[RMDB]
RNA sequence: GGGAACGACUCGAGUAGAGUCGAAAAGAUAUGGAUCUGUGUAGCUAGCUGGGGAGUCGGAAACGACUCCUACAGCUUGGACCUACCAGAUCCUAAGUCAAACAUAACGGAGUUCGCUCCGUUAUGACUGAUAAAUAAACUUCGGUUUAUUUAUCAGAAAAGAAACAACAACAACAAC
Reactivity to 2A3 in 0.01 (KOAc 150mM, MgCl2 10mM, bicine 150mM(pH8.5), 24C), signal-to-noise 3, nucleotides 027 to 126: g010a000u020a010u070g000g000a000u000c000u010g070u030g000u140a000g010c030u020a010g000c000u020g020g010g000g020a000g010u000c000g000g000a090a010a000c000g000a010c000u010c000c000u030a060c020a000g020c000u010u110g000g010a010c000c000u000a000c000c000a000g000a010u010c000c000u000a000a000g000u000c020a060a080a090c010a000u000a000a000c010g020g000a010g010u100u160c260g080c140u010c000c000g000u000u000a000u000g010a060
Reactivity to DMS in 0.01 (KOAc 150mM, MgCl2 10mM, bicine 150mM(pH8.5), 24C), signal-to-noise 9, nucleotides 027 to 126: g010a020u000a060u010g000g000a000u000c000u000g000u020g010u000a000g000c010u000a000g050c010u000g000g000g000g000a020g020u000c000g010g000a020a020a040c000g010a010c000u000c000c000u000a010c000a010g020c010u000u010g010g000a030c300c000u000a010c000c000a010g000a010u000c000c000u000a000a070g000u000c010a110a160a300c010a010u000a000a000c000g000g000a030g020u000u010c300g010c000u000c000c000g000u000u000a000u000g000a220